Source information:
Structure probing data (DMS) for a 177-nucleotide construct. Conditions: 150 mM KOAc, 10 mM MgCl2 and 150 mM bicine (pH 8.5), 24 C. The data come from the RNA Mapping Database (RMDB), library OK2TRN. For DMS the reverse transcriptase was MarathonRT.
[RMDB]
RNA sequence: GGGAACGACUCGAGUAGAGUCGAAAAAGUCAGACCAGGCCUGGUCAGGGUGGGAGCGGGGGUCUGUCGCUGGCCUGAGCCUCCCUGCCCCGCCGUUUGGCAGCCACCUUGGCCACCCUCACACUGGUCCAAGUAGGAUGUUCGCAUCCUACUUGGAAAAAGAAACAACAACAACAAC
Reactivity to DMS in 0.01 (KOAc 150mM, MgCl2 10mM, bicine 150mM(pH8.5), 24C), signal-to-noise 1, nucleotides 027 to 126: a070g000u000c010a020g000a080c010c040a040g020g030c230c150u000g020g060u000c030a010g020g020g040u000g000g010g010a190g000c040g000g000g000g000g000u000c030u010g000u000c210g000c040u010g000g020c020c020u000g010a070g000c040c030u000c010c010c000u000g000c010c000c030c110g020c020c020g000u020u000u000g000g020c120a200g010c000c020a000c010c000u000u000g000g000c000c000a110c030c010c010u010c080a150c230a130c040u000g010g010